Annotation:
Structure probing data (2A3 and DMS) for a 177-nucleotide construct. The 2A3 profile rests on 1,494 reads. The DMS profile rests on 1,733 reads. The reactions ran in a buffer of 150 mM KOAc, 10 mM MgCl2 and 150 mM bicine (pH 8.5), at 24 C. It was measured as part of the RMDB library OK2TST.
RNA sequence: GGGAACGACUCGAGUAGAGUCGAAAAGUCACGGUCACCACCCGGCUCAAGAAGCUGGUCUUCGGCUUCAGCGGCACCUUCGCCGACUUCGUCGCCGUGCUGCGCGACGACGGCUUCGUCCGGGCGCGUUGCAUGGUCUCUUCGGAGACCAUGCAACAAAAGAAACAACAACAACAAC
Reactivity to 2A3 in 0.01 (KOAc 150mM, MgCl2 10mM, bicine 150mM(pH8.5), 24C), signal-to-noise 2, nucleotides 027 to 126: g030u060c050a000c100g020g030u050c020a040c060c010a030c030c010c000g020g030c040u040c120a070a060g010a010a000g020c040u100g080g150u060c030u090u110c030g000g060c010u160u080c070a020g040c020g030g000c040a040c010c000u150u240c090g060c160c020g150a260c050u120u030c130g020u000c010g010c050c010g060u060g050c080u070g010c050g000c020g000a030c000g020a030c000g000g000c000u050u010c030g020u010c000c000g040g020g030c040g060c030
Reactivity to DMS in 0.01 (KOAc 150mM, MgCl2 10mM, bicine 150mM(pH8.5), 24C), signal-to-noise 1, nucleotides 027 to 126: g010u010c060a070c100g010g000u010c030a110c100c050a160c060c020c030g020g020c120u020c090a140a120g010a020a020g000c000u000g010g000u000c110u010u010c040g000g010c010u000u010c090a040g000c030g000g010c020a050c090c100u000u010c110g010c040c020g010a060c140u000u010c150g000u000c030g010c000c110g000u000g010c100u020g020c050g010c000g000a040c010g010a010c030g010g000c000u000u000c020g000u000c030c010g000g000g000c040g000c130